Source information
Conditions: 150 mM KOAc, 10 mM MgCl2 and 150 mM bicine (pH 8.5), 24 C. The record gives the reactivity of an RNA of 177 nucleotides to 2A3 and DMS. Reactivities are given for positions 27 through 126. Source: RMDB library OK1LIB, as collected in RNAgym. For 2A3, 1,102 sequencing reads were counted. DMS adducts were read by reverse transcription with MarathonRT.

[RMDB]
RNA sequence: GGGAACGACUCGAGUAGAGUCGAAAAGUAUUUUGGUUUGACACUGCUUCACACCCCCAAAAAAAAGAAGGGAGCUACGUCUGAGUUAAACUUGGAGAUGGAAGUCUUCUUUCCUUUCUCGACGGUGUGCUUCUGCUCAAUUCGUUGAGCAGAAGCAAAAAGAAACAACAACAACAAC
Reactivity to 2A3 in 0.01 (KOAc 150mM, MgCl2 10mM, bicine 150mM(pH8.5), 24C), signal-to-noise 3, nucleotides 027 to 126: g080u060a300u050u130u150u170g120g040u130u040u020g040a090c060a020c140u030g100c010u090u050c000a000c000a020c020c020c000c030c070a080a000a000a000a000a000a000a000g070a000a000g050g000g000a030g000c020u020a010c020g020u000c010u060g000a000g020u080u300a080a300a140c000u000u060g030g000a040g020a020u020g060g100a180a040g030u060c000u050u000c010u020u010u020c010c020u050u140u010c060u040c060g060a110c070g000g050u080g020
Reactivity to DMS in 0.01 (KOAc 150mM, MgCl2 10mM, bicine 150mM(pH8.5), 24C), signal-to-noise 1, nucleotides 027 to 126: g040u040a070u010u000u020u000g010g000u000u000u040g030a050c140a030c110u030g000c010u020u000c010a040c090a130c020c020c030c050c040a000a000a000a020a020a000a000a010g020a120a070g000g000g000a070g000c000u000a190c000g070u030c010u020g010a000g040u000u060a070a170a160c140u030u000g000g000a010g000a030u000g000g050a040a000g010u010c000u000u010c000u020u020u000c100c070u030u000u000c010u000c080g010a030c130g000g010u040g040